[RMDB]
Chemical mapping of a 177-nucleotide RNA with DMS.
For DMS, 2,331 sequencing reads were counted.
In probing experiments dimethyl sulfate is read out at A N1 and C N3, which are open when not base-paired.
DMS adducts were read by reverse transcription with MarathonRT.
The data come from the RNA Mapping Database (RMDB), library TTRINS.

RNA sequence: GGGAACGACUCGAGUAGAGUCGAAAAGAUAUGGAUGUGGUUCGACAGACAGUCUACGGGAGAAACGUAUCGGAAACGAUACCUUUCAUCGAUCGUAGGACUGUCUGUCGAACCACAUCCUAAGUCACCGUUAUAAUUAGUUCGCUAAUUAUAACGGAAAAGAAACAACAACAACAAC
Reactivity to DMS in 0.01 (KOAc 150mM, MgCl2 10mM, bicine 150mM(pH8.5), 24C), signal-to-noise 2, nucleotides 027 to 126: g030a040u010a300u000g000g010a000u000g080u000g000g000u020u000c010g000a040c000a010g010a010c000a000g010u000c000u000a010c000g000g010g010a090g010a030a040a020c300g000u000a000u010c000g000g010a130a090a260c000g020a040u000a000c010c090u000u000u000c020a190u000c240g020a060u010c000g000u000a060g020g000a040c000u000g000u010c000u010g000u000c000g000a000a020c000c000a000c000a010u010c000c000u000a000a050g020u000c040a240